[RMDB]
RNA sequence: GGGAACGACUCGAGUAGAGUCGAAAAUUAAAUGUCUCUCUAUUGUCUCUCUAUUCAGAACUUAGUAUGGUGAUGGAUCGAUAGAGUGACAAUCCUGCAUCUGUCAUCCAUCACCAUAAAAAAAAAAGUAUUAAUGAUCGUUCGCGAUCAUUAAUACAAAAGAAACAACAACAACAAC
Reactivity to DMS in 0.01 (KOAc 150mM, MgCl2 10mM, bicine 150mM(pH8.5), 24C), signal-to-noise 2, nucleotides 027 to 126: u000u010a050a090a100u010g000u000c010u000c000u000c030u000a040u000u000g000u010c040u000c000u010c050u000a120u020u000c070a100g000a080a100c070u000u000a090g010u000a010u000g000g010u000g000a010u000g000g000a010u000c190g020a000u000a000g000a040g020u000g000a080c030a050a120u020c180c110u020g010c030a100u010c010u000g000u000c000a030u000c010c000a010u000c000a000c000c000a000u000a000a000a000a000a000a040a050a090a060a090
Structure probing data (DMS) for a 177-nucleotide construct.
For DMS the reverse transcriptase was MarathonRT.
Conditions: 150 mM KOAc, 10 mM MgCl2 and 150 mM bicine (pH 8.5), 24 C.
It was measured as part of the RMDB library M2PK90.